[RMDB]
RNA sequence: GGGAACGACUCGAGUAGAGUCGAAAAGCAAUCCUCUUUACCGAAUCGGACGAUCCCGACCAUUUCAUCUUCUUCGAAACGUUCCAGCGCGUCACUUAAUCCGGAGCGCACGCCGCGAGGCAAAUCGUUUUGCGGUAGGAUUCGUCCUACCGCAAAAAAAAGAAACAACAACAACAAC
Reactivity to DMS in 0.01 (KOAc 150mM, MgCl2 10mM, bicine 150mM(pH8.5), 24C), signal-to-noise 2, nucleotides 027 to 126: g110c170a190a160u010c010c000u000c130u000u010u010a100c100c000g000a050a020u000c010g000g000a100c030g010a090u040c000c000c000g010a080c150c010a080u010u020u000c060a040u000c050u000u000c030u030u010c050g010a000a070a100c050g040u000u020c010c020a140g000c040g000c000g000u000c020a040c120u030u000a110a160u000c050c150g030g130a100g070c000g000c080a160c040g000c010c000g010c080g000a130g000g010c030a020a060a070u010c120g020
Reactivity to 2A3 in 0.01 (KOAc 150mM, MgCl2 10mM, bicine 150mM(pH8.5), 24C), signal-to-noise 2, nucleotides 027 to 126: g110c050a000a110u010c000c000u080c010u030u070u080a050c010c010g080a100a050u030c010g010g000a050c050g060a080u100c030c000c020g010a000c010c000a070u040u050u070c010a020u010c000u070u000c010u020u040c060g040a080a000a000c040g040u020u000c010c020a000g000c010g000c000g080u030c030a040c090u050u140a060a050u040c020c020g000g000a020g040c000g030c010a010c060g010c040c000g000c030g010a010g030g000c000a000a000a170u090c040g000